Structure probing data (DMS) for a 177-nucleotide construct.

[RMDB]
RNA sequence: GGGAACGACUCGAGUAGAGUCGAAAAUAUGUGGAUACGUUGAAGAGUUACGUGUAACUUGGUAUCGUCCACAGCCUGCAAAGCCUCACUAAACUUUCUGAAACAUUGAAAGAAGUGAAAAAUCACGCAUAAGCACCUGGUUCGCCAGGUGCUUAUGAAAAGAAACAACAACAACAAC
Reactivity to DMS in 0.01 (KOAc 150mM, MgCl2 10mM, bicine 150mM(pH8.5), 24C), signal-to-noise 1, nucleotides 027 to 126: u010a070u000g030u000g030g000a020u000a070c140g000u000u000g000a110a270g000a020g000u000u000a030c010g020u030g000u000a050a020c010u010u000g030g030u000a050u000c020g000u000c000c000a000c020a050g000c060c000u010g000c200a040a110a030g030c130c090u010c010a020c010u000a100a100a080c010u000u000u000c000u000g030a150a240a100c240a130u000u020g000a000a000a030g020a080a020g010u020g010a010a110a010a050a090u010c170a010c190g010
For DMS, 775 sequencing reads were counted.